[RMDB]
RNA sequence: GGGAACGACUCGAGUAGAGUCGAAAAUACACCAGUUGGUUAGCCCGAGAGGAUGUCUCAGCCAACGUACGCGGAAUGAGUUUUGAACCCGAAAUGCACCGUUAUUAACCCAUCAGCAUCACGGCUAUCAUUAUGAAGUCUUCGGACUUCAUAAUGAAAAAGAAACAACAACAACAAC
Reactivity to DMS in 0.01 (KOAc 150mM, MgCl2 10mM, bicine 150mM(pH8.5), 24C), signal-to-noise 5, nucleotides 027 to 126: u010a110c130a100c040c040a140g010u000u010g010g000u000u000a090g010c060c010c040g000a130g000a140g000g010a150u000g010u000c030u010c070a070g010c010c030a050a050c060g010u000a050c150g010c040g000g000a100a080u000g000a110g000u000u000u000u010g010a060a130c030c020c020g000a050a050a060u010g000c030a050c040c030g010u000u000a070u010u000a100a130c080c010c000a050u000c100a050g000c030a030u010c060a070c140g010g020c070u000a120
Reactivity to 2A3 in 0.01 (KOAc 150mM, MgCl2 10mM, bicine 150mM(pH8.5), 24C), signal-to-noise 3, nucleotides 027 to 126: u140a010c060a030c030c000a010g030u060u030g040g000u040u070a020g030c020c000c020g070a060g000a040g080g020a090u120g170u030c000u020c070a000g030c020c020a020a020c040g020u060a040c060g010c030g020g050a180a130u090g040a090g160u030u060u120u120g070a070a080c030c030c010g020a030a050a040u100g010c030a010c000c010g000u030u020a070u110u070a070a050c000c010c010a040u070c040a010g030c000a010u080c040a010c060g060g020c020u050a040